This 177-nucleotide RNA was probed chemically with 2A3. The 2A3 profile rests on 522 reads. The RNA was probed in 150 mM KOAc, 10 mM MgCl2 and 150 mM bicine (pH 8.5) at 24 C. For 2A3 the reverse transcriptase was SuperScript II with manganese.
[RMDB]
RNA sequence: GGGAACGACUCGAGUAGAGUCGAAAACGUGGACUGGACCGUCGAGCUGGACGCCUUUCUUCGCGAACAGCCAACCACGGAGUUUGCGCCGGCCGAACGUCGUGUCGGUGACGUGGAGAUAGCCGUCGAGCGUCGCACGAUUCGUCGUGCGACGCUCAAAAGAAACAACAACAACAAC
Reactivity to 2A3 in 0.01 (KOAc 150mM, MgCl2 10mM, bicine 150mM(pH8.5), 24C), signal-to-noise 1, nucleotides 027 to 126: c090g000u040g010g000a030c000u150g020g090a070c060c000g050u060c030g050a150g040c010u090g000g000a020c030g100c030c000u030u070u110c040u060u030c010g000c000g020a070a000c020a010g000c000c000a000a000c030c000a030c070g040g000a210g070u080u110u060g030c040g000c000c000g000g040c020c000g090a110a060c090g300u190c000g000u060g050u300c110g000g020u010g050a000c030g010u000g030g000a060g000a040u020a080g000c020c000g050u040c020